[RMDB]
This 207-nucleotide RNA was probed chemically with 2A3 and DMS. For 2A3, 2,803 sequencing reads were counted.
RNA sequence: GGGAACGACUCGAGUAGAGUCGAAAAGUAUGUUACGAUUAUGUGACUAGCCAUAAUCGAUGAAGGUACUCGACUUCAUCGUAACAUAGAAUUGUCAGUGCGUACUGGCUAGUCACAGUACGGCAGACUACACACCUAGUCUGCCACUGACUAGGUGAGUAGCUGAUUACUUCGGUAAUCAGCUACUAAAAGAAACAACAACAACAAC
Reactivity to 2A3 in 0.01 (KOAc 150mM, MgCl2 10mM, bicine 150mM(pH8.5), 24C), signal-to-noise 4, nucleotides 027 to 156: g080u070a040u120g040u060u140a060c040g020a180u130u100a070u170g010u000g000a000c000u000a000g010c010c010a090u140a180a060u140c030g000a000u010g000a030a000g030g020u110a090c020u030c080g120a050c020u010u000c000a000u000c020g010u000a010a010c020a040u090a050g160a200a190u170u130g070u100c060a080g130u080g270c040g030u060a060c040u040g000g010c000u000a000g010u000c010a000c000a000g000u000a010c010g000g060c000a020g010a060c010u080a040c090a000c000a000c020c020u020a000g000u010c000u080g140c010c030a020c010u000g000a000c000u000a000g030g000u020g020
Reactivity to DMS in 0.01 (KOAc 150mM, MgCl2 10mM, bicine 150mM(pH8.5), 24C), signal-to-noise 2, nucleotides 027 to 156: g020u000a050u010g000u010u000a060c030g040a120u000u010a080u000g050u010g010a030c000u010a030g020c060c010a040u010a080a120u010c050g010a070u000g000a020a000g000g040u000a110c250u000c070g010a110c000u000u000c010a020u000c040g050u000a070a050c030a070u010a110g010a100a200u020u010g000u000c030a160g010u010g010c030g000u020a090c160u040g020g000c010u000a030g020u010c020a020c010a000g000u000a060c080g010g020c000a120g000a080c040u000a050c090a240c020a050c060c030u010a010g000u000c000u010g040c080c020a010c070u010g000a050c000u000a070g020g010u000g010